[RMDB]
RNA sequence: GGGAACGACUCGAGUAGAGUCGAAAAGUGACAGCAGCCCUCAUAGCGAGGUAUGCAGGUGCUGAAGGGAAAUAUGGAAACGUUUUCGUCGACGAUUCGGAGGAUAGCAACGACGAUGAUCGCGAAGCGGGACUACCCACUUCGGUGGGUAGUCCCGAAAAGAAACAACAACAACAAC
Reactivity to DMS in 0.01 (KOAc 150mM, MgCl2 10mM, bicine 150mM(pH8.5), 24C), signal-to-noise 2, nucleotides 027 to 126: g010u000g020a130c070a170g000c030a010g000c090c020c030u000c010a050u000a110g000c200g020a040g020g000u020a010u000g010c040a080g010g010u000g050c020u000g010a060a080g000g010g000a060a140a100u010a080u020g010g000a070a120a200c070g020u010u000u030u010c010g010u020c060g000a090c140g020a060u000u000c000g010g010a230g000g000a090u020a050g000c280a090a170c030g010a130c010g010a040u000g010a120u000c050g050c060g000a060a070g030